[RMDB]
RNA sequence: GGGAACGACUCGAGUAGAGUCGAAAAAGAAUCUCCUUCGGGAGAUUCUGAACCACUAAGCUGAUUGCGGAUGACGACGAGGCAGCUCGUGUCGAGCAACCACCGAGAACAGGUUCGCCUGUUCUAAUAACCAAAGGUGUUUCGACACCUUUGGUUAAAAAGAAACAACAACAACAAC
Reactivity to DMS in 0.01 (KOAc 150mM, MgCl2 10mM, bicine 150mM(pH8.5), 24C), signal-to-noise 4, nucleotides 027 to 126: a020g000a030a010u000c000u000c000c010u000u010c190g000g010g010a000g000a000u000u010c000u000g000a070a230c020c010a120c220u000a090a130g000c130u000g010a050u010u000g010c010g000g020a170u010g010a030c040g010a020c020g020a050g010g000c300a130g000c000u000c000g010u000g010u010c020g010a240g000c020a020a030c030c020a020c130c060g000a040g010a020a000c000a010g000g010u000u000c240g010c000c000u000g000u000u000c000u000a070a110
Reactivity to 2A3 in 0.01 (KOAc 150mM, MgCl2 10mM, bicine 150mM(pH8.5), 24C), signal-to-noise 2, nucleotides 027 to 126: a000g020a000a010u000c000u000c020c030u040u070c190g080g010g010a000g010a000u000u010c000u000g000a000a000c000c010a010c100u110a110a060g050c110u040g040a050u050u070g000c040g010g090a080u230g000a030c210g040a020c000g000a020g050g070c040a110g120c070u000c000g040u040g000u020c040g020a010g020c000a000a000c000c020a040c040c070g150a030g000a030a010c000a000g030g050u020u050c140g020c020c000u000g000u000u000c000u000a020a040